[RMDB]
RNA sequence: GGGAACGACUCGAGUAGAGUCGAAAAUGGGAAAUGUUUUUUGAAUAUGCUGGGGCAUCCAGCUUGCAAUAAAACAGUGGAACUAGAAGAAGAGAUCAUACCAAAUAGUAUAGCCCUUUCUUUCUCCCCGUCACUGCCCCUGUCCUAUUUAGGUAAAUAUCAUAGGAGGUUUCGACCUCCUAUGAUAAAAAGAAACAACAACAACAAC
Reactivity to 2A3 in 0.01 (KOAc 150mM, MgCl2 10mM, bicine 150mM(pH8.5), 24C), signal-to-noise 1, nucleotides 027 to 156: u120g010g000g030a010a070a080u040g010u020u050u000u020u050u060g100a110a050u150a090u070g000c040u020g010g020g050g100c060a080u160c000c010a000g010c000u020u040g000c000a000a040u040a130a020a000a010c030a000g040u030g020g010a050a000c050u060a110g020a060a000g020a080a000g010a060g030a070u100c030a010u090a020c000c020a000a000a190u090a060g040u050a020u000a110g000c000c000c000u070u170u030c000u090u130u000c000u060c060c000c000c070g030u060c030a060c090u050g030c000c000c030c000u020g020u040c010c010u060a100u100u150u210a000g000g000u070a090a090a030
Reactivity to DMS in 0.01 (KOAc 150mM, MgCl2 10mM, bicine 150mM(pH8.5), 24C), signal-to-noise 1, nucleotides 027 to 156: u020g000g010g010a070a140a110u000g000u030u000u000u020u000u020g000a090a120u000a070u010g030c010u000g010g050g030g090c220a070u010c010c000a030g010c000u020u010g000c070a050a110u010a020a050a020a020c040a080g020u020g020g000a070a050c020u000a110g020a030a060g000a090a030g030a060g040a090u000c060a080u000a030c010c010a070a080a120u010a070g000u010a050u000a040g020c020c000c020u010u000u000c020u000u000u000c000u000c050c010c030c000g020u000c070a040c040u000g010c020c020c010c030u000g000u000c030c040u000a150u010u010u000a050g010g000u000a050a040a160